RNA sequence: GGGAACGACUCGAGUAGAGUCGAAAACGACCGCAAAGCGUCUCUUGCACGCGAAGGCCAUGAAACCCUGGUUAACGAUCUGGUGUUCAAAGGUUCCGCGCCGCAUAACAUCGUUAGCGUGUUCGAUCAGCCGAACAUUAACCGUCUGACCUCCGCAAUUGAAGUGCUUGUUCGCAAGCACUUCAAUAAAAGAAACAACAACAACAAC
Reactivity to 2A3 in 0.01 (KOAc 150mM, MgCl2 10mM, bicine 150mM(pH8.5), 24C), signal-to-noise 1, nucleotides 027 to 156: c000g010a030c010c020g040c050a040a050a060g030c040g070u020c030u070c030u070u060g030c040a030c050g010c020g020a060a050g050g000c020c000a060u070g100a100a100a130c010c000c000u040g040g010u060u030a080a040c090g040a040u040c020u080g030g020u080g040u080u040c110a070a200a090g010g000u160u000c050c070g020c040g070c090c060g110c030a050u000a170a000c040a080u060c020g190u170u070a030g000c020g050u070g070u050u080c080g000a110u020c020a000g110c060c010g010a050a000c000a010u110u180a110a110c010c000g000u000c030u040g060a080c000c000u000c050c040g020c060a000